[RMDB]
RNA sequence: GGGAACGACUCGAGUAGAGUCGAAAAGAUAUGGAAGUUCACAGACAGCUUUGAUCGUCUCUCGGAAACGAGAGACGGGAGCUGUAUGUGAGACUUCCUAAGUCAAAAUCCCUACUUCGGUAGGGAACACUCGUUAACGGUUCGCCGUUAACGAGUGAAAAGAAACAACAACAACAAC
Reactivity to 2A3 in 0.01 (KOAc 150mM, MgCl2 10mM, bicine 150mM(pH8.5), 24C), signal-to-noise 2, nucleotides 027 to 126: g020a040u130a050u170g020g030a000a000g000u000u040c000a020c000a000g030a020c000a010g100c040u220u300u240g160a200u300c020g000u000c010u000c000u020c000g000g080a120a100a070c020g000a010g010a000g030a010c010g000g000g010a000g010c000u000g010u020a020u010g000u000g010a040g030a010c010u000u000c030c000u010a090a010g090u000c000a040a040a000a300u010c000c020c000u000a010c010u040u090c300g140g000u000a000g030g000g030a020a030
Reactivity to DMS in 0.01 (KOAc 150mM, MgCl2 10mM, bicine 150mM(pH8.5), 24C), signal-to-noise 1, nucleotides 027 to 126: g040a040u010a300u010g000g000a060a030g000u000u020c020a010c000a000g020a020c010a000g000c010u000u000u030g010a070u010c000g000u010c010u000c020u000c010g010g000a130a120a300c010g000a040g000a000g040a000c000g020g010g010a000g000c010u000g020u010a010u000g010u020g000a050g020a020c000u000u020c000c010u000a030a080g010u000c060a080a090a210a110u010c000c000c000u000a040c000u000u010c180g060g000u010a040g010g000g030a020a080